Structure probing data (DMS and 2A3) for a 207-nucleotide construct.
For DMS, 9,300 sequencing reads were counted.
The reactions ran in a buffer of 150 mM KOAc, 10 mM MgCl2 and 150 mM bicine (pH 8.5), at 24 C.
RNA sequence: GGGAACGACUCGAGUAGAGUCGAAAAAGUCACUGUCACUUUAUUUGAGUACAAUGUGGAUUACUGUACUCUCAGUCAGUAGGUGACCUGACUAGAGUCGAGAGUACAGGUCACCUACAUAUUGUACUCAGUGUCAGUGAGUGACGUGACACUGACACGUAACCACGUAUUUCGAUACGUGGUUACGAAAAGAAACAACAACAACAAC
Reactivity to DMS in 0.01 (KOAc 150mM, MgCl2 10mM, bicine 150mM(pH8.5), 24C), signal-to-noise 3, nucleotides 027 to 156: a070g000u010c000a030c030u000g040u010c010a030c020u010u000u000a080u020u010u010g000a030g040u000a020c000a010a020u010g010u010g010g020a280u010u000a060c010u000g010u000a060c030u010c150u010c140a080g010u000c030a080g010u000a030g030g020u010g010a060c060c000u010g000a050c030u000a060g010a160g000u000c080g010a180g000a060g000u010a100c020a020g010g010u000c040a010c070c000u000a020c010a010u000a010u000u000g000u000a030c010u000c030a040g010u010g020u020c140a140g020u010g000a040g020u000g010a060c030g020u000g010a100c000a080c070u000g000a090c050a200
Reactivity to 2A3 in 0.01 (KOAc 150mM, MgCl2 10mM, bicine 150mM(pH8.5), 24C), signal-to-noise 9, nucleotides 027 to 156: a000g020u020c020a010c080u120g010u000c000a010c020u060u140u180a120u130u160u060g000a000g000u000a000c000a000a000u020g010u020g040g040a060u080u090a050c000u010g040u100a050c010u030c020u030c080a020g030u020c000a010g000u010a020g020g050u030g020a010c010c000u010g000a010c000u020a020g020a020g130u160c120g030a020g000a000g130u050a270c000a000g010g010u010c000a010c000c000u010a000c000a000u010a000u000u000g000u000a000c000u000c010a010g020u040g080u120c090a090g070u040g110a000g000u000g000a000c010g000u000g010a000c010a010c060u050g040a020c000a010